Structure probing data (DMS and 2A3) for a 207-nucleotide construct.
Source: RMDB library ARCHII, as collected in RNAgym.
Conditions: 150 mM KOAc, 10 mM MgCl2 and 150 mM bicine (pH 8.5), 24 C.
2A3 adducts were read by reverse transcription with SuperScript II with manganese.

RNA sequence: GGGAACGACUCGAGUAGAGUCGAAAAUUAAAAGUGGGGAACCGAGCCUAGCAAAGCUUUGAGCUAGGAACGGAAUUUAUGAAGCUUACCAAAGAGAAAGUUUGUCUGUGGACGUUCUCUGAGGGAAUUUUAAAACACAAGACUACACUCGUAGAAACAUACAGGUCAAGUUCGCUUGACCUGUAUGAAAAGAAACAACAACAACAAC
Reactivity to DMS in 0.01 (KOAc 150mM, MgCl2 10mM, bicine 150mM(pH8.5), 24C), signal-to-noise 2, nucleotides 027 to 156: u010u020a070a030a100a150g020u000g030g020g020g040a130a300c020c010g010a140g030c000c000u000a000g030c010a020a160a090g000c010u000u000u000g000a300g000c030u000a020g000g000a050a020c020g000g050a090a040u000u010u000a050u030g010a060a030g020c020u010u000a090c010c000a000a280a070g010a060g010a010a040a020g030u010u000u000g010u020c070u000g060u000g040g020a000c010g000u000u000c010u000c040u000g010a300g010g000g000a020a040u000u030u010u000a010a050a040a040c060a030c020a040a100g000a070c000u000a050c070a080c080u000c080g020u010a080g020a290a070a190
Reactivity to 2A3 in 0.01 (KOAc 150mM, MgCl2 10mM, bicine 150mM(pH8.5), 24C), signal-to-noise 2, nucleotides 027 to 156: u080u030a050a020a030a060g090u180g000g010g000g010a010a010c000c000g000a010g000c000c000u000a000g000c000a000a010a020g000c010u020u010u000g000a000g000c010u000a000g000g000a000a010c000g000g040a010a030u160u080u070a020u040g030a000a000g000c000u050u300a030c000c000a010a000a000g000a000g000a010a030a010g010u010u000u010g010u000c000u000g000u000g000g000a000c000g000u010u000c010u010c000u010g000a010g000g010g000a000a000u060u050u030u040a000a000a000a000c000a000c000a100a100g000a000c010u030a010c030a040c040u080c060g100u130a030g090a070a070a010